[RMDB]
RNA sequence: GGGAACGACUCGAGUAGAGUCGAAAAUCGGACUGGUUCGCCAGUCCGAAAAUAACGGUCCGUGCUUGCAGCUGAUUGUAUAUGCUAACUGGCCUUACAUCAAAAGCCCGGACUUCGGUCCGGGCAACCUUAAGUUAGACUUCGGUCUAACUUAAGGAAAAGAAACAACAACAACAAC
Reactivity to DMS in 0.01 (KOAc 150mM, MgCl2 10mM, bicine 150mM(pH8.5), 24C), signal-to-noise 2, nucleotides 027 to 126: u000c000g000g010a010c010u000g000g000u000u010c150g040c000c000a000g000u000c000c000g000a000a000a070a110u010a070a090c200g010g030u010c000c040g000u000g010c050u000u000g000c050a060g000c150u010g000a090u000u010g010u010a040u000a040u020g030c020u010a100a050c070u000g000g010c020c010u010u000a060c100a090u000c080a060a110a140a160g000c010c000c000g000g000a030c000u000u010c120g030g010u000c010c000g010g000g020c010a000a000
Reactivity to 2A3 in 0.01 (KOAc 150mM, MgCl2 10mM, bicine 150mM(pH8.5), 24C), signal-to-noise 2, nucleotides 027 to 126: u020c000g010g010a010c000u010g000g000u050u060c110g030c060c000a010g000u000c000c000g010a000a000a000a000u040a040a020c030g000g000u000c020c020g010u020g030c050u100u090g050c020a040g010c040u150g110a190u190u040g150u040a120u030a020u260g030c010u050a110a080c020u020g000g000c000c000u040u110a080c020a090u220c120a030a040a130a070g000c000c030c000g000g020a000c010u000u020c140g020g000u010c000c000g010g000g000c000a000a020